[RMDB]
RNA sequence: GGGAACGACUCGAGUAGAGUCGAAAAUGGACUAAGGUUGAGGUAUAGAAUCCUAUUCGCUCCUGGUAGGAGAAAUUCUAUAUUGCUUAUAUACGUGCUUGUGCACGUAUAUAAAUGCUCAUGCAAACUUACGAUAAAACUUCGGUUUUAUCGUAAGAAAAGAAACAACAACAACAAC
Reactivity to 2A3 in 0.01 (KOAc 150mM, MgCl2 10mM, bicine 150mM(pH8.5), 24C), signal-to-noise 8, nucleotides 027 to 126: u110g060g040a040c080u090a060a070g100g020u080u070g050a040g050g010u020a010u000a010g020a010a020u010c000c000u010a020u050u120c060g020c060u060c020c020u050g040g010u030a020g000g020a040g030a100a130a020u020u000c010u010a040u000a020u020u140g010c000u020u010a000u000a000u000a000c000g000u000g030c050u300u300g090u170g140c010a000c000g000u000a000u000a000u000a000a000a010u120g000c010u020c070a060u130g030c050a060a030a040
Reactivity to DMS in 0.01 (KOAc 150mM, MgCl2 10mM, bicine 150mM(pH8.5), 24C), signal-to-noise 8, nucleotides 027 to 126: u010g000g020a110c070u010a090a090g020g000u000u010g010a100g000g010u000a040u000a010g010a030a020u000c020c010u010a040u000u010c100g010c070u010c040c030u010g000g010u000a010g000g000a120g000a080a120a060u000u000c010u000a010u000a020u000u010g010c060u000u000a010u000a010u000a000c000g010u000g010c000u020u030g010u030g000c000a000c000g010u000a000u000a000u000a000a020a090u020g010c040u010c090a060u010g010c110a080a060a170